The record gives the reactivity of an RNA of 177 nucleotides to 2A3 and DMS. DMS adducts were read by reverse transcription with MarathonRT. For 2A3 the reverse transcriptase was SuperScript II with manganese. Conditions: 150 mM KOAc, 10 mM MgCl2 and 150 mM bicine (pH 8.5), 24 C. The 2A3 profile rests on 14,616 reads. Source: RMDB library OK1LIB, as collected in RNAgym.
RNA sequence: GGGAACGACUCGAGUAGAGUCGAAAACAACAGAGUAGUGUGCAGGCAUUCGAUACGUACAACAGUCAGACCUGUUGAGUUUGAUUUAGUAUUCAAUAAGCGCGCUCAUAAAGUAAGGCAUAUUGACGAUUUAUUAUGACUUCGGUCAUAAUAAAUCAAAAGAAACAACAACAACAAC
Reactivity to 2A3 in 0.01 (KOAc 150mM, MgCl2 10mM, bicine 150mM(pH8.5), 24C), signal-to-noise 9, nucleotides 027 to 126: c040a010a020c040a030g110a020g100u240a020g040u070g020u040g040c040a040g100g010c040a060u050u060c080g030a020u020a070c050g090u050a040c050a070a000c000a060g050u050c010a010g020a080c010c010u120g120u200u160g060a160g010u010u040u050g060a080u020u040u120a040g020u030a050u050u130c040a030a020u080a130a030g000c010g000c000g000c040u010c020a080u200a100a120a010g130u110a040a070g100g030c070a070u090a080u130u150g070a050c080
Reactivity to DMS in 0.01 (KOAc 150mM, MgCl2 10mM, bicine 150mM(pH8.5), 24C), signal-to-noise 5, nucleotides 027 to 126: c080a100a100c050a110g000a140g030u050a090g020u010g030u000g000c040a090g010g000c110a060u010u010c130g030a040u010a040c070g020u030a050c130a050a130c300a020g000u010c020a010g000a160c010c020u010g010u010u010g000a140g000u000u010u000g000a050u010u000u030a120g010u000a050u010u020c070a020a020u010a050a100g000c030g010c040g000c010u000c070a090u030a050a070a070g010u020a070a090g000g000c050a030u020a080u000u010g000a110c280